The record gives the reactivity of an RNA of 177 nucleotides to DMS and 2A3.
The DMS profile rests on 7,444 reads.
Values cover nucleotides 27 to 126.

[RMDB]
RNA sequence: GGGAACGACUCGAGUAGAGUCGAAAAGAUCGGCUGUUUGGCCGCAAUGGUCAGGUUACCCACGGAAGAGUUGUGUACGGAGAGCGCGAAGUCGGUCGGAGAAAGCGCCUGUUCAGUUGCCAGUGCACACGUACCAUUAGUUCGCUAAUGGUACGUGAAAAGAAACAACAACAACAAC
Reactivity to DMS in 0.01 (KOAc 150mM, MgCl2 10mM, bicine 150mM(pH8.5), 24C), signal-to-noise 5, nucleotides 027 to 126: g000a060u010c020g020g010c010u000g010u020u010u010g010g020c020c020g040c200a080a050u010g010g020u010c020a060g010g000u010u010a140c040c020c030a140c180g010g000a090a090g000a080g020u010u000g020u000g010u000a050c090g000g000a080g000a110g020c060g030c030g010a070a080g030u000c020g010g010u000c030g000g000a130g000a060a110a150g000c060g010c030c030u010g010u000u000c080a090g010u000u010g000c030c020a100g000u010g000c110a150
Reactivity to 2A3 in 0.01 (KOAc 150mM, MgCl2 10mM, bicine 150mM(pH8.5), 24C), signal-to-noise 2, nucleotides 027 to 126: g020a090u070c030g020g000c040u030g060u210u180u240g100g000c060c020g040c030a010a200u210g000g000u010c030a020g000g070u070u060a110c000c060c030a010c080g010g050a080a040g030a050g010u120u150g000u040g020u060a030c020g030g000a010g010a000g060c000g000c020g040a030a030g050u090c060g010g000u020c060g040g000a120g090a030a060a000g030c050g000c000c030u050g050u060u080c060a040g020u040u090g090c030c010a050g030u060g030c030a000